This 207-nucleotide RNA was probed chemically with 2A3. Source: RMDB library M2RFPK, as collected in RNAgym. The 2A3 profile rests on 536 reads. Conditions: 150 mM KOAc, 10 mM MgCl2 and 150 mM bicine (pH 8.5), 24 C. 2A3 adducts were read by reverse transcription with SuperScript II with manganese.
[RMDB]
RNA sequence: GGGAACGACUCGAGUAGAGUCGAAAAACUGAUACCUUACGAGGUAUCAGAAUGACUUCGUGGUAGAACGCCACGAACGGAAAAUAAAGAAAGCUCGAUUGAAACGCACCGUGUACGCACGGUGCGAAAAAGUCGAUCCAGUUCGCUGGAUCGACAACAUCCCUACCCUGUUCGCAGGGUAGGGAUGAAAAGAAACAACAACAACAAC
Reactivity to 2A3 in 0.01 (KOAc 150mM, MgCl2 10mM, bicine 150mM(pH8.5), 24C), signal-to-noise 1, nucleotides 027 to 156: a000c020u010g010a000u000a020c000c000u020u040a020c160g010a000g030g000u000a000u040c000a000g000a010a060u140g040a010c010u030u000c000g020u000g000g000u040a190g120a300a070c100g030c000c000a000c000g020a010a010c010g010g020a020a200a080a040u230a000a170a040g210a050a200a000g070c110u080c180g120a260u080u300g090a180a060a020c020g010c000a040c040c040g000u000g030u010a030c200g000c070a020c000g000g000u000g000c000g000a000a000a000a000a000g000u000c000g000a000u010c000c000a010g040u110u020c060g000c120u000g000g000a000u000c000g030a000c000a000a000